[RMDB]
RNA sequence: GGGAACGACUCGAGUAGAGUCGAAAAGAUAUGGACACAUGGACAUGAGCAUAAAGUGUCGGAAACGACAUACAAAGCUCAACAGCCCGCUGUGUCCUAAGUCAAAAGAAGGACUUCGGUCCUUCAAGUAGAUAUUUGUGUUCGCACAAAUAUCUACAAAAGAAACAACAACAACAAC
Reactivity to DMS in 0.01 (KOAc 150mM, MgCl2 10mM, bicine 150mM(pH8.5), 24C), signal-to-noise 4, nucleotides 027 to 126: g010a030u000a300u010g020g000a020c000a020c010a030u000g010g000a010c020a270u010g000a010g010c020a040u010a140a140a190g020u010g000u000c000g010g000a080a100a120c000g000a010c000a010u000a040c140a140a110a120g010c010u000c000a030a070c240a120g010c020c000c000g040c180u000g000u000g000u000c000c000u010a040a040g010u010c020a080a080a060a090g000a010a000g010g000a020c000u000u010c210g050g000u000c000c000u000u000c000a020a070
Reactivity to 2A3 in 0.01 (KOAc 150mM, MgCl2 10mM, bicine 150mM(pH8.5), 24C), signal-to-noise 4, nucleotides 027 to 126: g000a020u070a020u130g010g000a000c010a000c010a020u150g010g010a030c060a180u160g000a000g020c010a030u120a250a180a060g040u020g010u010c020g000g000a060a070a000c010g010a000c010a000u070a020c110a030a120a020g000c000u000c010a060a050c060a050g050c040c000c000g030c060u000g000u000g000u000c010c000u000a030a010g020u000c020a050a020a000a130g000a010a000g010g010a010c000u040u130c300g150g000u000c000c000u010u010c000a000a000
Structure probing data (DMS and 2A3) for a 177-nucleotide construct. 2A3 adducts were read by reverse transcription with SuperScript II with manganese. Conditions: 150 mM KOAc, 10 mM MgCl2 and 150 mM bicine (pH 8.5), 24 C. Source: RMDB library TTRDEL, as collected in RNAgym.